[RMDB]
RNA sequence: GGGAACGACUCGAGUAGAGUCGAAAACAGAAAUAUCACCGACUAGACAACGUUUCUCCGGAUCCUGAGAACGAAUCAAUGCCGGAUGAAACGCAGUAUGCGAUGGCGGCAAUGGAUGGCGAGCCGAUCGCCUUCGUUCACUCCCACACUGGCGACGGACUGUAGUUGCCUUCGGGCAACUACAGUCAAAAGAAACAACAACAACAAC
Reactivity to 2A3 in 0.01 (KOAc 150mM, MgCl2 10mM, bicine 150mM(pH8.5), 24C), signal-to-noise 1, nucleotides 027 to 156: c030a010g150a030a120a010u210a070u000c040a000c040c030g080a110c070u100a110g020a050c110a180a000c010g000u000u030u000c000u000c000c000g130g040a080u180c050c100u090g010a010g100a070a060c100g090a040a060u120c030a010a080u150g050c000c000g000g010a090u220g000a000a000a000c000g020c000a000g140u060a030u080g040c090g000a000u030g060g000c020g000g020c020a000a080u220g090g030a070u070g120g030c050g010a030g000c180c060g030a040u000c000g000c020c110u000u010c030g070u010u090c030a000c040u020c000c030c000a050c000a000c090u060g060g000c060g000a030c040g050

Chemical mapping of a 207-nucleotide RNA with 2A3.
The data come from the RNA Mapping Database (RMDB), library OK3TST.